RNA sequence: GGGAACGACUCGAGUAGAGUCGAAAAAGACGCAUGAGCUCAGCCUCGCCAGCCCAACCUCAAUGGUCGCCUGGACUAGCGCCCUGGAGGAGGUGCACGUCAGGAACGGCUGUGUGCCGUACGGGCACUUCCCAAACCCGUUCGCGGGUUUGGGAAGAAAAGAAACAACAACAACAAC
Reactivity to DMS in 0.01 (KOAc 150mM, MgCl2 10mM, bicine 150mM(pH8.5), 24C), signal-to-noise 2, nucleotides 027 to 126: a120g000a100c070g040c040a050u040g010a070g030c060u000c180a110g010c060c010u000c080g000c040c040a110g000c010c000c030a060a120c080c030u000c070a130a100u010g000g030u010c050g000c030c030u000g010g020a080c090u000a120g000c050g010c070c000c030u000g020g010a120g020g000a120g020g020u010g020c010a060c070g030u000c070a090g020g030a100a120c040g010g000c030u000g030u010g030u000g000c000c020g010u000a100c090g000g010g030c030a110
Reactivity to 2A3 in 0.01 (KOAc 150mM, MgCl2 10mM, bicine 150mM(pH8.5), 24C), signal-to-noise 2, nucleotides 027 to 126: a000g040a020c050g010c080a060u130g060a040g040c020u050c120a030g020c030c000u010c000g030c000c000a050g000c020c010c020a040a090c010c020u060c040a020a170u150g020g060u040c010g020c040c050u110g060g060a080c050u110a040g020c000g010c010c010c010u060g070g060a070g040g040a080g000g000u010g010c020a000c030g000u000c040a030g110g120a160a040c040g000g040c040u110g030u040g040u080g160c000c010g060u070a070c070g000g010g000c000a010